RNA sequence: GGGAACGACUCGAGUAGAGUCGAAAAGGCGGUGAAAACAGCAAACACGGUAUUUGGCAUGAGGACUUGCCGCAAGCCAUUGAGAAAAUUCAGCAAUAUGGAUUAACGCUGGUGGGGAUACAUAUGCAAGGAUACUACGAUUCGUCGUAGUAUCCUUAAAAGAAACAACAACAACAAC
Reactivity to DMS in 0.01 (KOAc 150mM, MgCl2 10mM, bicine 150mM(pH8.5), 24C), signal-to-noise 6, nucleotides 027 to 126: g020g010c020g010g030u000g000a070a080a100a110c100a080g020c070a060a070a110c090a060c100g010g000u000a060u010u000u010g010g020c040a070u000g020a090g010g010a140c100u000u000g020c020c010g010c090a060a140g010c010c020a040u000u000g010a100g000a050a060a040a040u000u000c050a030g000c070a090a100u010a080u010g000g010a050u000u010a050a120c100g010c040u000g000g020u000g000g000g000g000a090u020a030c120a040u000a070u010g010c180
Reactivity to 2A3 in 0.01 (KOAc 150mM, MgCl2 10mM, bicine 150mM(pH8.5), 24C), signal-to-noise 2, nucleotides 027 to 126: g020g020c040g010g000u020g030a060a070a020a030c020a020g040c010a050a080a000c090a030c070g050g020u110a120u070u070u070g040g000c030a050u070g030a070g050g060a040c050u050u040g020c000c000g020c000a000a020g000c000c020a030u040u160g030a060g110a060a130a040a070u130u060c040a030g000c050a070a040u080a110u180g020g040a040u140u000a100a010c100g000c020u030g030g000u010g000g050g000g000a020u040a140c060a050u180a060u140g040c010